[RMDB]
RNA sequence: GGGAACGACUCGAGUAGAGUCGAAAAGAUAUGGAGUGGUUAGGGAGCCUCCAAUCGGAAACGAUUGAAGAGGCGUUGAUCUAACGUAACAUCUCCUAAGUCAAACCAGCAUGUUCGCAUGCUGGAACAAGAUGGAAUGGUUCGCCAUUCCAUCUUGAAAAGAAACAACAACAACAAC
Reactivity to 2A3 in 0.01 (KOAc 150mM, MgCl2 10mM, bicine 150mM(pH8.5), 24C), signal-to-noise 4, nucleotides 027 to 126: g000a000u010a010u050g010g010a010g020u080g020g000u160u000a000g000g000g000a010g000c000c000u000c020c020a000a000u010c000g000g030a010a010a000c010g000a010u030u110g120a300a140g000a040g020g000c010g000u030u010g000a000u020c000u000a000a010c020g060u100a080a030c020a200u130c010u000c010c010u000a010a000g020u010c000a000a040a150c000c000a000g020c000a000u010g020u110u160c300g050c170a000u000g000c020u000g000g010a010a050
Reactivity to DMS in 0.01 (KOAc 150mM, MgCl2 10mM, bicine 150mM(pH8.5), 24C), signal-to-noise 4, nucleotides 027 to 126: g000a000u000a010u010g000g000a020g030u010g030g000u000u000a020g000g000g000a010g010c000c000u000c000c000a010a000u000c000g010g000a010a020a020c000g000a010u000u000g000a130a140g010a010g020g020c000g010u000u020g000a020u010c010u000a000a000c010g040u000a100a260c250a100u010c010u000c000c010u010a000a120g010u000c010a080a100a190c010c000a010g010c000a000u000g000u000u020c210g020c010a000u000g010c000u000g000g000a060a100

The record gives the reactivity of an RNA of 177 nucleotides to 2A3 and DMS. DMS (dimethyl sulfate) methylates the pairing face of unpaired adenines and cytosines. The reactions ran in a buffer of 150 mM KOAc, 10 mM MgCl2 and 150 mM bicine (pH 8.5), at 24 C. The DMS profile rests on 6,035 reads. The 2A3 profile rests on 10,853 reads. Reactivities are given for positions 27 through 126. The data come from the RNA Mapping Database (RMDB), library TTRDEL.